[RMDB]
Description: An RNA of 177 nucleotides, treated with 2A3 and DMS and read out base by base. The reactions ran in a buffer of 150 mM KOAc, 10 mM MgCl2 and 150 mM bicine (pH 8.5), at 24 C.
RNA sequence: GGGAACGACUCGAGUAGAGUCGAAAAGACAAUUGCAGCAUAUUAGGCUAAGCAGGAAAGGGACGGUAGCUCCUGGUGUCAGUUCAUACGGUGUGAUGCAUCUGCGUCGUGCACACAUGCACCCAAACAUGCUUGAUAUGUUCGCAUAUCAAGCAUGAAAAGAAACAACAACAACAAC
Reactivity to 2A3 in 0.01 (KOAc 150mM, MgCl2 10mM, bicine 150mM(pH8.5), 24C), signal-to-noise 6, nucleotides 027 to 126: g040a010c030a020a110u110u110g010c010a010g000c010a040u050a130u250u140a120g080g000c020u050a060a040g030c030a020g010g090a100a040a010g040g010g010a010c030g040g040u060a030g020c030u030c010c020u010g000g030u030g030u030c050a040g030u010u080c030a040u080a170c080g030g000u030g010u020g050a160u030g000c000a020u020c040u130g060c040g080u150c020g010u050g000c010a010c000a000c000a030u060g050c010a050c000c010c010a010a040a030
Reactivity to DMS in 0.01 (KOAc 150mM, MgCl2 10mM, bicine 150mM(pH8.5), 24C), signal-to-noise 8, nucleotides 027 to 126: g010a070c080a080a080u010u010g010c030a070g000c030a070u000a100u010u010a070g010g010c030u000a080a110g020c040a050g010g000a070a080a080g000g010g000a060c050g010g010u000a080g010c070u000c030c020u000g000g010u000g010u000c050a040g000u010u000c080a070u000a090c120g010g000u010g010u000g000a100u000g010c020a030u000c060u000g020c120g000u010c120g030u000g000c020a020c040a020c050a050u000g010c070a110c010c010c040a060a080a180
For 2A3 the reverse transcriptase was SuperScript II with manganese. DMS adducts were read by reverse transcription with MarathonRT.